[RMDB]
RNA sequence: GGGAACGACUCGAGUAGAGUCGAAAAGAGAUUGGACAAUCCGCAGCCAAGCCUCUUCGCAAGAAGUGGAAGGUUCAGAGACUAAAUGGUUGUGGGUGGCAGACGGUUUCGCGAAUGUAUGAAUCAAUCAUAAACACGUGAAGGAAGUCUGCUGCUUUAAUAUAUGGAAGUUCGCUUCCAUAUAUUAAAAAGAAACAACAACAACAAC
Reactivity to DMS in 0.01 (KOAc 150mM, MgCl2 10mM, bicine 150mM(pH8.5), 24C), signal-to-noise 3, nucleotides 027 to 156: g000a090g010a150u000u000g010g020a140c050a100a120u000c010c010g050c000a040g030c000c010a090a120g010c040c000u000c000u010u000c010g010c250a120a200g000a070a090g010u000g000g000a090a150g010g000u000u000c090a090g010a150g000a080c010u010a080a100a160u010g020g040u010u010g020u030g010g020g040u010g020g030c030a020g010a020c030g010g000u000u000u010c010g000c010g010a090a130u020g000u000a030u000g000a060a220u010c200a140a250u000c010a020u000a040a050a030c010a120c000g010u000g000a040a050g000g000a150a210g020u000c010u010g010c010u000g000c030u000u000
Reactivity to 2A3 in 0.01 (KOAc 150mM, MgCl2 10mM, bicine 150mM(pH8.5), 24C), signal-to-noise 5, nucleotides 027 to 156: g060a000g020a070u100u140g030g010a030c040a060a060u030c020c010g000c030a000g010c010c000a040a040g050c000c000u020c020u030u000c000g000c050a070a070g010a040a020g050u060g030g050a110a060g060g000u090u130c070a020g060a010g020a140c020u120a110a080a120u070g030g020u010u020g010u010g010g030g010u020g010g000c000a000g000a000c020g040g070u010u020u010c010g000c000g030a120a040u140g010u040a010u010g040a030a070u160c140a050a110u030c000a060u010a020a020a010c030a010c020g000u000g010a010a000g060g050a060a050g000u000c000u000g000c000u000g000c000u000u000

The record gives the reactivity of an RNA of 207 nucleotides to DMS and 2A3. In probing experiments dimethyl sulfate is read out at A N1 and C N3, which are open when not base-paired. The RNA was probed in 150 mM KOAc, 10 mM MgCl2 and 150 mM bicine (pH 8.5) at 24 C.